Annotation:
The record gives the reactivity of an RNA of 177 nucleotides to DMS and 2A3.

RNA sequence: GGGAACGACUCGAGUAGAGUCGAAAAGACGAAGCGUGCCGAAAGGCACGUGGAGGUCUGCUAGCGUUGGUGUCCUACAAUACCCUCGCGUGACCUAUGUCUAGGGGUGAAAGGCCCAUCGAAUCCGACAUGCACCAUCGUUCGCGAUGGUGCAUGUAAAAGAAACAACAACAACAAC
Reactivity to DMS in 0.01 (KOAc 150mM, MgCl2 10mM, bicine 150mM(pH8.5), 24C), signal-to-noise 3, nucleotides 027 to 126: g010a030c000g000a300a210g020c000g050u000g000c000c010g010a110a070a160g000g010c000a000c000g000u000g000g000a280g010g020u000c000u010g010c260u000a100g020c010g020u000u000g010g010u000g000u030c020c010u010a060c240a070a100u010a110c080c000c000u000c130g010c140g000u010g000a040c070c190u010a110u040g010u000c010u010a100g000g000g000g000u000g050a090a060a040g000g000c010c000c000a010u000c010g010a090a150u020c010c010g000
Reactivity to 2A3 in 0.01 (KOAc 150mM, MgCl2 10mM, bicine 150mM(pH8.5), 24C), signal-to-noise 2, nucleotides 027 to 126: g000a000c000g040a010a000g000c000g000u000g000c000c010g070a090a070a010g000g000c000a000c010g010u000g000g000a010g140g050u000c020u000g000c090u060a020g030c000g020u000u070g040g000u070g040u200c000c000u030a070c080a010a100u160a130c000c060c000u020c010g020c090g030u090g080a110c040c080u120a050u160g030u000c000u020a010g020g020g000g000u020g000a020a060a100g010g030c000c000c000a000u010c000g000a010a040u030c010c000g040